RNA sequence: GGGAACGACUCGAGUAGAGUCGAAAACCUAUUAUGAAAGCCCUAUCCCUAGUGAUUAGCCUAGUCGUGAUUAGCGUGGUGGUGAUUAUUAUCCCACCGUGCGGGGCUGCACUUGGACGAAGAAUGGUACACUCUCUAUAUUCGUAUAGAGAGUGUAAAAAGAAACAACAACAACAAC
Reactivity to 2A3 in 0.01 (KOAc 150mM, MgCl2 10mM, bicine 150mM(pH8.5), 24C), signal-to-noise 9, nucleotides 027 to 126: c020c000u030a130u190u120a170u190g200a090a050a020g030c010c000c010u040a090u070c010c000c000u010a010g010u010g050a160u130u170a010g010c010c010u050a070g080u150c100g100u120g140a180u100u120a020g000c010g000u010g010g000u000g000g040u150g100a010u000u200a060u140u150a020u050c000c000c000a000c000c000g000u010g000c000g000g000g000g000c000u000g000c000a000c000u030u040g010g030a020c060g030a040a050g090a090a090u140g030g020
Reactivity to DMS in 0.01 (KOAc 150mM, MgCl2 10mM, bicine 150mM(pH8.5), 24C), signal-to-noise 9, nucleotides 027 to 126: c010c010u000a070u030u020a090u020g010a090a090a100g000c030c010c020u000a230u000c200c010c030u000a030g010u000g000a080u020u020a050g020c050c010u000a060g010u010c130g010u020g010a120u020u020a100g020c000g030u000g000g020u000g010g010u030g020a010u000u020a130u020u020a190u000c010c000c000a000c000c000g030u000g010c000g010g000g000g000c010u000g000c030a020c030u000u000g000g000a110c150g010a100a070g000a080a080u010g010g010